RNA sequence: GGGAACGACUCGAGUAGAGUCGAAAAGAUAUGGAGCAAUCAAGAGCAACAGCACGGAUUCGGAAACGAAUCCCGUGACAUGCUCUCGAUUGCUCCUAAGUCAAAGACACGUCCUUCGGGACGUGUCCCUUAUUCGGAUGUUCGCAUCCGAAUAAGGAAAAGAAACAACAACAACAAC
Reactivity to 2A3 in 0.01 (KOAc 150mM, MgCl2 10mM, bicine 150mM(pH8.5), 24C), signal-to-noise 4, nucleotides 027 to 126: g010a000u070a030u180g000g000a010g030c000a010a000u010c020a030a010g010a010g020c020a010a180c080a190g060c000a010c000g000g000a010u010u010c010g010g040a080a070a060c010g010a010a000u030c190c020c010g000u010g050a080c010a060u110g000c000u000c000u010c000g010a000u010u000g000c000u010c000c000u000a000a000g000u000c010a040a020a060g000a000c000a000c010g000u000c010c000u050u140c300g060g000g000a000c000g010u000g000u010c000
Reactivity to DMS in 0.01 (KOAc 150mM, MgCl2 10mM, bicine 150mM(pH8.5), 24C), signal-to-noise 6, nucleotides 027 to 126: g010a030u000a300u010g010g000a020g010c000a000a000u000c000a040a030g000a010g030c000a040a060c240a220g010c010a010c020g000g000a050u000u000c000g000g010a110a090a240c000g000a020a000u000c150c040c050g020u000g000a040c090a250u000g000c010u000c010u010c040g000a010u000u000g000c000u000c000c000u000a000a050g020u000c030a100a100a150g000a010c000a000c000g010u000c000c000u000u010c230g030g020g010a010c000g030u000g000u000c000
Structure probing data (2A3 and DMS) for a 177-nucleotide construct. The RNA was probed in 150 mM KOAc, 10 mM MgCl2 and 150 mM bicine (pH 8.5) at 24 C. DMS adducts were read by reverse transcription with MarathonRT. It was measured as part of the RMDB library TTRDES.